[RMDB]
RNA sequence: GGGAACGACUCGAGUAGAGUCGAAAAGAAAGAAAUCAGGCGCGGGUGGUCAUUCCGCCCCGCCGGGCCGGCGCUUCCGCACGGGGCGAAUCCGGUCGGGCGUCCGUCGAUAACCGGGCGCCGCGAAGACCUAAGAUCUGUUCGCAGAUCUUAGGUCAAAAGAAACAACAACAACAAC
Reactivity to 2A3 in 0.01 (KOAc 150mM, MgCl2 10mM, bicine 150mM(pH8.5), 24C), signal-to-noise 3, nucleotides 027 to 126: g100a000a030a000g030a010a240a010u050c040a020g030g020c040g030c110g020g010g000u010g010g020u150c060a140u300u040c020c000g030c000c020c000c010g000c010c000g000g010g010c000c010g000g000c000g010c010u300u270c030c030g110c150a120c270g000g000g000g010c000g010a000a050u040c000c000g000g000u010c000g030g020g000c000g000u020c010c000g000u010c030g010a070u020a060a000c000c000g010g000g010c000g000c000c000g000c020g000a020a010
Reactivity to DMS in 0.01 (KOAc 150mM, MgCl2 10mM, bicine 150mM(pH8.5), 24C), signal-to-noise 1, nucleotides 027 to 126: g030a160a120a020g000a070a080a030u000c000a030g000g000c000g000c230g010g000g000u000g000g000u040c300a290u050u010c060c000g000c010c000c000c010g020c000c000g000g000g000c000c000g000g000c000g000c000u000u050c000c120g040c300a050c170g000g000g030g030c000g030a030a090u040c000c000g000g000u000c000g010g000g030c000g020u000c010c000g000u000c000g000a060u000a080a060c020c000g000g000g000c000g010c010c010g030c180g000a120a080

This 177-nucleotide RNA was probed chemically with 2A3 and DMS.
It was measured as part of the RMDB library RFM100.
The reactions ran in a buffer of 150 mM KOAc, 10 mM MgCl2 and 150 mM bicine (pH 8.5), at 24 C.
The DMS profile rests on 1,960 reads.
For 2A3, 1,618 sequencing reads were counted.